Conditions: 150 mM KOAc, 10 mM MgCl2 and 150 mM bicine (pH 8.5), 24 C.
This 177-nucleotide RNA was probed chemically with DMS and 2A3.
Values are in units of 0.01, from 0 to 300, in steps of 10.
It was measured as part of the RMDB library OK2TRN.
[RMDB]
RNA sequence: GGGAACGACUCGAGUAGAGUCGAAAAGCCGGCGGCCGCGCCGAGCUGCUGUUCGGCGCCGGCGGUGCGGGUGGGGCGGGCACCGACGGCGGGCCCGGUGCUACCGGCGGGACCGGCGGACACGGCGGAGGAUUAUGGUAUUCGUACCAUAAUCCUCAAAAGAAACAACAACAACAAC
Reactivity to DMS in 0.01 (KOAc 150mM, MgCl2 10mM, bicine 150mM(pH8.5), 24C), signal-to-noise 3, nucleotides 027 to 126: g020c010c010g010g000c080g010g040c010c030g020c020g010c010c010g020a020g000c020u000g030c230u010g020u000u000c010g010g000c010g000c130c060g050g010c010g000g030u000g020c070g010g030g010u010g000g010g000g010c060g010g000g000c020a090c020c010g010a090c190g010g010c060g020g000g010c040c020c040g010g010u010g010c050u000a060c040c010g000g000c030g020g000g010a110c020c000g000g000c020g000g000a100c100a080c060g020g020c120g010
Reactivity to 2A3 in 0.01 (KOAc 150mM, MgCl2 10mM, bicine 150mM(pH8.5), 24C), signal-to-noise 3, nucleotides 027 to 126: g010c010c020g060g040c040g080g010c030c000g010c000g000c010c030g020a020g000c070u180g070c100u150g020u050u050c010g000g030c020g000c050c020g030g000c030g000g060u120g100c090g040g000g070u190g030g020g040g100c100g000g010g030c060a130c180c020g110a170c050g070g070c010g000g040g010c000c020c030g000g020u090g040c000u080a070c030c020g060g000c010g010g060g010a090c010c000g010g020c080g000g010a010c070a010c080g120g000c070g100

For 2A3 the reverse transcriptase was SuperScript II with manganese.